An RNA of 177 nucleotides, treated with DMS and 2A3 and read out base by base. The data come from the RNA Mapping Database (RMDB), library OK1LIB. For DMS the reverse transcriptase was MarathonRT. Conditions: 150 mM KOAc, 10 mM MgCl2 and 150 mM bicine (pH 8.5), 24 C.
[RMDB]
RNA sequence: GGGAACGACUCGAGUAGAGUCGAAAAGACAACUCAUGUCAGCCAAACCUUAAAUUGGGAUUUGAAGAGGGGCAGUACCCGGGGCCCAGCCAACAGAUGAGCGGAAUAAAUGAAGCUGUGAGUGGACUCAUGUGGGCCUUUUCGAAGGCCCACAUGAAAAAGAAACAACAACAACAAC
Reactivity to DMS in 0.01 (KOAc 150mM, MgCl2 10mM, bicine 150mM(pH8.5), 24C), signal-to-noise 1, nucleotides 027 to 126: g000a090c070a050a220c030u000c010a120u000g080u000c000a080g020c000c020a020a090a150c040c070u000u000a070a040a130u000u000g000g040g000a270u000u070u010g030a090a030g090a140g010g040g000g020c070a020g050u080a060c000c030c000g000g000g000g020c040c040c000a010g000c120c010a040a030c080a000g000a030u000g000a000g020c010g010g000a170a120u000a090a130a080u050g040a090a080g000c040u060g010u020g050a050g000u000g000g020a130c100
Reactivity to 2A3 in 0.01 (KOAc 150mM, MgCl2 10mM, bicine 150mM(pH8.5), 24C), signal-to-noise 1, nucleotides 027 to 126: g010a000c140a010a000c000u020c050a090u020g120u170c000a000g030c000c000a070a090a050c000c000u300u210a100a070a170u210u000g020g000g050a000u030u000u170g080a100a010g000a130g060g030g000g000c000a060g000u210a190c000c000c000g000g000g020g000c000c010c000a000g000c000c000a070a020c000a060g300a100u120g000a060g100c010g150g010a100a100u100a060a090a080u100g190a080a000g000c020u020g080u040g100a020g050u050g000g000a010c020